This 177-nucleotide RNA was probed chemically with DMS and 2A3.
RNA sequence: GGGAACGACUCGAGUAGAGUCGAAAACAGUGAUGGAAACAUCACUGAAAAACGUGUAAGCGCACCACGAAAAAGUCGAUCGAAUACCGAUCGACAAGCGCUAAAGUCAUGCCGAAAGGCAUGACAAGCAUAUUUAGCGAUUCGUCGCUAAAUAUGCAAAAGAAACAACAACAACAAC
Reactivity to DMS in 0.01 (KOAc 150mM, MgCl2 10mM, bicine 150mM(pH8.5), 24C), signal-to-noise 5, nucleotides 027 to 126: c000a000g010u000g030a000u000g000g000a160a120a270c000a020u000c000a010c000u010g000a020a080a090a130a250c010g000u000g020u010a080a020g010c000g040c000a280c190c020a020c010g000a050a020a020a000a010g010u010c010g020a010u020c010g010a290a170u030a180c260c000g010a000u000c000g000a010c000a050a030g040c000g010c000u030a080a090a070g000u010c000a000u000g020c000c000g020a080a110a160g010g010c000a000u010g010a000c000a070a050
Reactivity to 2A3 in 0.01 (KOAc 150mM, MgCl2 10mM, bicine 150mM(pH8.5), 24C), signal-to-noise 9, nucleotides 027 to 126: c010a000g000u000g000a000u000g000g020a040a020a030c000a000u000c000a000c000u000g000a040a000a000a000a010c010g000u010g000u020a060a030g000c000g000c010a020c020c020a010c140g240a130a020a010a000a000g000u000c000g000a000u000c000g010a040a040u140a300c130c020g000a000u000c000g000a000c000a000a000g000c000g000c000u010a070a000a010g000u000c000a000u000g000c000c000g060a090a030a000g000g000c000a000u000g000a000c000a000a000
Source information:
Source: RMDB library OK1LIB, as collected in RNAgym. Values cover nucleotides 27 to 126.